RNA sequence: GGGAACGACUCGAGUAGAGUCGAAAAUUAAUACUGCUACAUUUUUAAGACCCUUAGUUAUUUAGCUUUACCGCCCAGGAUGGGGUGCAGCGUUCCUGCGAUAUCCAGGGCACCUAGGUGCAGCCUUCAUGCCUCAUGCCGUUCGCGGCAUGAGGAAGUAGAAGCACAAGUUCGCUUGUGCUUCUACAAAAGAAACAACAACAACAAC
Reactivity to 2A3 in 0.01 (KOAc 150mM, MgCl2 10mM, bicine 150mM(pH8.5), 24C), signal-to-noise 1, nucleotides 027 to 156: u050u030a020a140u080a150c040u030g070c010u080a020c120a110u060u160u000u040u180a100a130g080a080c000c000c010u010u080a050g040u060u100a120u160u140u020a010g020c000u030u050u050a050c010c060g000c010c000c000a050g000g000a020u020g010g040g000g180u090g020c010a000g000c010g050u040u190c000c010u000g000c000g080a050u040a010u080c010c000a000g000g010g000c010a010c010c010u050a010g120g000u040g000c010a120g130c070c060u070u120c030a030u130g030c020c000u010c000a000u000g020c030c000g040u070u050c290g010c000g190g000c000a000u000g000a000g000g000a000a000